The data come from the RNA Mapping Database (RMDB), library OK2TST. Chemical mapping of a 177-nucleotide RNA with 2A3 and DMS. For DMS, 1,232 sequencing reads were counted. The RNA was probed in 150 mM KOAc, 10 mM MgCl2 and 150 mM bicine (pH 8.5) at 24 C.
[RMDB]
RNA sequence: GGGAACGACUCGAGUAGAGUCGAAAAAAAGCGACAAUAUUGACGGAACAGUUCAUUACGGAAUUGCCUUCUCCGUCAUUGAAGGCAUCAUCAUGGGCCGCCAGCGUUAUCUGAUCGAAACCCUCGACACUUUUAUGGACUUCGGUCCAUAAAAGUGAAAAGAAACAACAACAACAAC
Reactivity to 2A3 in 0.01 (KOAc 150mM, MgCl2 10mM, bicine 150mM(pH8.5), 24C), signal-to-noise 1, nucleotides 027 to 126: a020a060a000g100c070g040a040c050a070a010u040a050u210u060g030a000c010g050g010a120a060c020a050g030u070u060c020a030u100u220a030c080g060g000a050a070u020u030g030c000c030u110u000c020u000c010c020g110u040c000a000u020u080g030a040a020g050g000c010a010u110c000a000u000c000a030u070g010g060g010c050c020g040c020c010a030g020c020g000u000u050a090u040c050u030g020a050u140c000g000a030a040a050c000c030c000u040c030g060a070
Reactivity to DMS in 0.01 (KOAc 150mM, MgCl2 10mM, bicine 150mM(pH8.5), 24C), signal-to-noise 2, nucleotides 027 to 126: a050a060a100g010c020g000a090c050a060a100u010a020u030u010g010a070c060g010g010a050a160c070a040g010u010u000c030a100u010u000a270c260g000g000a010a050u000u000g020c190c100u010u000c060u000c030c040g000u010c090a040u000u000g000a100a030g010g000c010a030u010c110a040u010c110a110u000g010g010g020c000c020g000c080c020a010g000c060g000u000u010a020u000c070u010g000a060u010c020g000a050a060a090c040c030c000u000c050g020a240